Source: RMDB library OK3TST, as collected in RNAgym.
An RNA of 207 nucleotides, treated with 2A3 and DMS and read out base by base.
For DMS, 9,048 sequencing reads were counted.
The reactions ran in a buffer of 150 mM KOAc, 10 mM MgCl2 and 150 mM bicine (pH 8.5), at 24 C.
For 2A3 the reverse transcriptase was SuperScript II with manganese.
The 2A3 profile rests on 5,496 reads.
RNA sequence: GGGAACGACUCGAGUAGAGUCGAAAAGCAGGUGUGGUGGCUCAUGCCUGUAGUUUCAGCUACUUCAAGAGGCCAAGGUGGGAGGAUCACUUGAGGCCAGGAGUUCAAGGCUGCAGUGAGCUGUGAUCAUGCCACUGCACUUCAGCCUGGGUGACAAAUCCAUUAAAAUGUUCGCAUUUUAAUGGAUAAAAGAAACAACAACAACAAC
Reactivity to 2A3 in 0.01 (KOAc 150mM, MgCl2 10mM, bicine 150mM(pH8.5), 24C), signal-to-noise 5, nucleotides 027 to 156: g020c030a000g000g000u020g000u000g010g040u030g040g000c030u030c080a010u020g010c010c020u010g000u020a060g000u000u040u050c030a030g010c020u050a020c020u050u050c040a090a050g040a090g120g020c020c020a020a040g030g010u030g020g040g000a100g030g060a090u060c000a020c040u060u060g070a120g040g020c000c000a010g000g000a010g000u050u120c070a060a020g040g000c040u020g000c020a000g010u020g080a090g020c050u030g060u100g060a140u190c080a070u230g000c000c000a000c000u020g000c010a010c020u080u040c030a010g010c000c010u020g000g030g040u070g020a010c030a020a190
Reactivity to DMS in 0.01 (KOAc 150mM, MgCl2 10mM, bicine 150mM(pH8.5), 24C), signal-to-noise 2, nucleotides 027 to 156: g030c000a040g030g010u000g040u000g000g000u000g010g010c130u020c030a060u000g020c020c010u000g010u000a030g010u000u000u020c030a090g020c030u000a040c030u010u000c050a070a120g000a160g030g000c020c010a080a090g040g020u000g020g020g000a130g000g020a110u000c010a020c030u000u000g020a110g060g000c010c020a060g000g010a080g010u000u010c070a060a050g020g020c020u000g010c020a020g010u000g010a080g040c010u010g030u010g000a130u010c110a090u010g000c000c010a020c010u000g030c010a030c020u000u000c050a050g000c000c000u000g000g020g020u000g000a060c060a050a110